This 207-nucleotide RNA was probed chemically with DMS and 2A3. Conditions: 150 mM KOAc, 10 mM MgCl2 and 150 mM bicine (pH 8.5), 24 C. The DMS profile rests on 5,173 reads. Source: RMDB library M2RFPK, as collected in RNAgym. High DMS reactivity at an A or C suggests that its Watson-Crick edge is free.
[RMDB]
RNA sequence: GGGAACGACUCGAGUAGAGUCGAAAAGGCCAAAAUUGAUUCGGCGGCCCUGUCAUGAGGCCGAAACGAAGGCACGUACCCCUUCGAAUGGCGUCGGGGAGUCAGCGGCUAUAUAUGCGCCUAAUGCUAAAGUCGUGCUGGUUCGCCAGCACGACAACGCUAUACAUAACUUCGGUUAUGUAUAGCGAAAAGAAACAACAACAACAAC
Reactivity to DMS in 0.01 (KOAc 150mM, MgCl2 10mM, bicine 150mM(pH8.5), 24C), signal-to-noise 2, nucleotides 027 to 156: g010g000c010c020a060a060a080a210u010u010g000a170u000u000c030g010g000c070g020g010c000c000c010u000g010u010c170a130u020g000a080g000g020c000c010g020a030a060a120c020g000a040a020g000g020c020a090c040g020u020a160c050c030c000c010u000u000c000g020a110a150u010g020g010c060g010u010c060g040g000g010g010a080g000u000c050a100g010c010g000g000c020u010a060u010a090u000a060u010g010c020g000c030c030u010a110a170u000g020c040u010a070a090a120g010u000c020g020u010g020c000u010g010g030u000u020c300g030c000c000a000g000c010a000c000g030a010c000a010a020
Reactivity to 2A3 in 0.01 (KOAc 150mM, MgCl2 10mM, bicine 150mM(pH8.5), 24C), signal-to-noise 7, nucleotides 027 to 156: g040g000c020c020a050a040a030a100u140u180g040a120u110u050c040g090g010c000g000g020c070c010c010u070g160u120c100a150u140g030a040g050g010c010c000g010a030a020a000c020g010a010a020g030g000c050a010c150g060u120a080c010c000c010c010u020u030c020g140a180a130u160g110g020c030g070u030c030g000g010g010g000a050g080u100c070a010g020c010g040g000c030u000a010u010a010u010a010u240g060c060g000c010c020u080a110a050u120g040c060u100a150a040a030g000u000c000g000u010g000c000u000g000g040u030u020c080g030c100c000a000g000c000a000c000g000a000c000a000a000